[RMDB]
RNA sequence: GGGAACGACUCGAGUAGAGUCGAAAACGCGGCCGGCGGGGGCCGCUACGAACACGGAGCGCUGGCGUCGCACAUCGUGAUCGCCACGCUGAUGCACCACGGGGUGCUCCCGGCGGCCCCGGGGGACCACUCGGAGGGGGUUCGCCCCCUCCGAGUGAAAAGAAACAACAACAACAAC
Reactivity to 2A3 in 0.01 (KOAc 150mM, MgCl2 10mM, bicine 150mM(pH8.5), 24C), signal-to-noise 1, nucleotides 027 to 126: c030g020c100g030g000c000c050g110g150c040g050g000g000g060g000c030c000g000c080u000a070c080g170a120a000c020a030c300g020g030a000g000c000g030c200u030g000g000c030g000u000c030g100c110a060c000a270u300c210g000u000g000a100u300c190g000c040c000a000c000g020c000u040g080a200u280g000c040a040c090c000a000c150g190g000g030g040u030g060c000u020c000c030c020g090g020c000g000g000c030c000c000c000g000g000g000g000g060a000c000